[RMDB]
RNA sequence: GGGAACGACUCGAGUAGAGUCGAAAACGGCGUAUUAGUGUCGACUGUAGCAUGUCGUGACGUAUCGAUACCAACUGUAUAAUGCCAGUCAAUCAUAGCCGACUGCAGUGUCAGUUAUGCGGUCACGCGCAGUACGUGCUGACUGUACACAAUCGCAACAAAGAGUUGUUUUCGAACAACUCUUUGUAAAAGAAACAACAACAACAAC
Reactivity to DMS in 0.01 (KOAc 150mM, MgCl2 10mM, bicine 150mM(pH8.5), 24C), signal-to-noise 3, nucleotides 027 to 156: c050g030g020c030g030u020a070u000u010a040g010u000g030u000c040g010a050c030u000g030u010a180g020c020a100u000g010u010c080g040u000g020a080c040g010u000a080u010c030g030a120u000a050c030c050a080a100c050u000g010u020a090u010a090a060u000g040c060c020a040g020u000c020a140a130u000c140a110u000a120g000c050c040g010a040c010u010g030c040a110g020u010g000u010c020a050g000u000u000a050u010g000c030g020g010u010c030a060c030g000c050g030c040a120g040u010a180c030g020u000g010c000u000g020a040c000u010g000u000a040c010a040c050a050a190u000c010g010c020a150
Reactivity to 2A3 in 0.01 (KOAc 150mM, MgCl2 10mM, bicine 150mM(pH8.5), 24C), signal-to-noise 8, nucleotides 027 to 156: c030g060g000c010g010u220a040u050u060a130g030u070g020u060c070g110a030c030u050g040u050a020g000c020a020u040g010u070c010g030u040g050a120c020g030u060a080u190c060g030a030u090a160c060c060a030a000c020u020g070u110a040u040a110a080u050g070c160c020a000g010u010c010a020a110u100c090a130u160a140g120c080c080g020a000c000u010g000c010a020g020u010g050u100c010a000g000u020u100a070u240g080c060g040g000u050c050a010c040g020c020g000c010a030g050u100a060c030g030u050g020c000u030g080a100c020u050g040u110a000c010a000c000a020a040u080c030g000c020a040